[RMDB]
RNA sequence: GGGAACGACUCGAGUAGAGUCGAAAAGAAAAUGAUAUACGAGGUUAAACAACACUGGCCUACAAAUGAUAGAGACAUACCAGCAUUCAGCGUUAAGAAUUGGCUUCGUGUUUGCCUUUAUUUACACAAUUUUAACGAAGAUAUGCAAUACGUGCCGAAACCGGGAUAUAUUCGUAUAUCCCGGUUUAAAAGAAACAACAACAACAAC
Reactivity to 2A3 in 0.01 (KOAc 150mM, MgCl2 10mM, bicine 150mM(pH8.5), 24C), signal-to-noise 2, nucleotides 027 to 156: g020a000a070a000a100u080g020a030u040a000u020a180c030g050a040g030g020u090u170a050a250a000c000a030a010c010a020c000u010g040g000c000c000u070a090c110a000a110a030u100g040a040u050a040g060a010g060a070c010a020u100a060c000c040a010g010c000a020u080u110c030a050g020c060g070u130u190a100a050g070a020a200u070u050g000g030c000u060u050c040g040u040g050u010u020u030g050c010c010u050u050u010a130u010u140u100a090c110a000c000a040a140u120u090u080u180a050a010c030g010a000a010g000a070u060a000u200g030c000a050a000u030a160c030g050u010g000c000c000g140
Reactivity to DMS in 0.01 (KOAc 150mM, MgCl2 10mM, bicine 150mM(pH8.5), 24C), signal-to-noise 2, nucleotides 027 to 156: g010a120a080a130a080u010g000a170u000a060u000a030c060g010a060g040g020u010u010a060a110a130c040a080a110c050a070c060u000g000g020c040c050u000a130c110a210a100a110u010g020a140u010a050g000a080g020a030c050a100u000a090c030c030a080g020c040a070u010u000c050a080g020c030g030u000u020a050a090g000a040a080u000u010g010g010c030u000u000c130g010u000g000u020u000u000g000c020c040u010u000u030a040u020u000u000a100c090a040c060a080a090u000u000u000u000a050a080c100g010a030a100g030a040u000a000u000g010c030a100a070u020a050c010g000u000g010c030c050g000
Annotation: Conditions: 150 mM KOAc, 10 mM MgCl2 and 150 mM bicine (pH 8.5), 24 C. An RNA of 207 nucleotides, treated with 2A3 and DMS and read out base by base.